This 177-nucleotide RNA was probed chemically with DMS and 2A3. For 2A3 the reverse transcriptase was SuperScript II with manganese. The data come from the RNA Mapping Database (RMDB), library 15KREP.
[RMDB]
RNA sequence: GGGAACGACUCGAGUAGAGUCGAAAAGCUGGGGACGAAGCCGCCCCCGGGCGCUCCCCUCGAUACGCCUUCGAGGGGGUUCACACCUCCAGUCGGCGGGCCGGCUACUCUUCUUUCCCUUCUCUCGGUGAAUAACUAAGUUCGCUUAGUUAUUCACAAAAGAAACAACAACAACAAC
Reactivity to DMS in 0.01 (KOAc 150mM, MgCl2 10mM, bicine 150mM(pH8.5), 24C), signal-to-noise 3, nucleotides 027 to 126: g020c160u010g030g000g020g020a010c070g020a110a160g010c020c010g030c010c020c010c020c040g000g010g020c080g010c160u000c030c000c010c020u010c000g010a050u000a050c200g020c150c150u010u000c010g010a030g000g000g010g000g000u000u000c070a100c130a160c080c010u000c040c060a220g000u000c050g010g020c090g000g010g010c140c080g020g000c020u000a080c250u000c010u000u000c010u000u010u000c000c000c010u000u010c030u010c050u000c180g010
Reactivity to 2A3 in 0.01 (KOAc 150mM, MgCl2 10mM, bicine 150mM(pH8.5), 24C), signal-to-noise 2, nucleotides 027 to 126: g040c020u040g000g010g000g010a000c020g040a060a010g020c000c010g020c020c010c000c000c020g000g040g090c050g010c030u120c020c000c010c000u010c000g010a020u040a050c100g110c060c080u020u000c010g000a020g000g030g000g000g000u110u120c050a070c010a020c040c020u020c070c030a060g090u050c010g010g010c070g030g000g020c160c050g030g020c000u000a020c020u030c020u000u030c040u060u030u060c020c000c000u050u030c040u000c010u010c030g080